[RMDB]
RNA sequence: GGGAACGACUCGAGUAGAGUCGAAAAGAUAUGAUGGCCUUGUCACAGAGAUCACAAGGGACACGGAGUUGACUUUUGCUCAAGGUGGAACGACAGAGCUGUGUAGGCAAGAUGAGAAAUUGCGAACUCUACCAGUAUCCUUCGGGAUACUGGUAGAAAAAGAAACAACAACAACAAC
Reactivity to 2A3 in 0.01 (KOAc 150mM, MgCl2 10mM, bicine 150mM(pH8.5), 24C), signal-to-noise 4, nucleotides 027 to 126: g060a050u150a050u210g060a030u070g070g010c000c000u030u070g020u040c020a010c010a010g070a000g000a100u040c020a040c050a130a050g000g010g050a030c030a010c040g090g000a030g020u020u030g190a160c080u100u090u170u120g000c000u000c010a070a080g130g000u020g010g030a060a020c010g050a030c050a080g000a010g040c010u010g030u010g030u130a060g030g000c010a000a030g030a080u190g030a040g080a090a070a050u070u080g050c060g020a060a040c030
Reactivity to DMS in 0.01 (KOAc 150mM, MgCl2 10mM, bicine 150mM(pH8.5), 24C), signal-to-noise 4, nucleotides 027 to 126: g010a100u030a070u000g000a050u020g000g000c060c040u000u020g000u000c030a050c090a080g000a050g000a080u020c060a060c090a080a170g000g010g010a300c080a040c050g000g000a090g000u020u010g000a120c190u000u010u020u010g010c070u000c010a040a080g000g010u010g020g010a220a150c040g030a070c210a060g000a060g010c020u000g020u000g000u000a090g000g000c030a010a020g000a090u010g010a160g000a030a060a090u000u000g010c060g010a070a080c170
Description:
Structure probing data (2A3 and DMS) for a 177-nucleotide construct. For DMS the reverse transcriptase was MarathonRT. 2A3 adducts were read by reverse transcription with SuperScript II with manganese. Values are in units of 0.01, from 0 to 300, in steps of 10.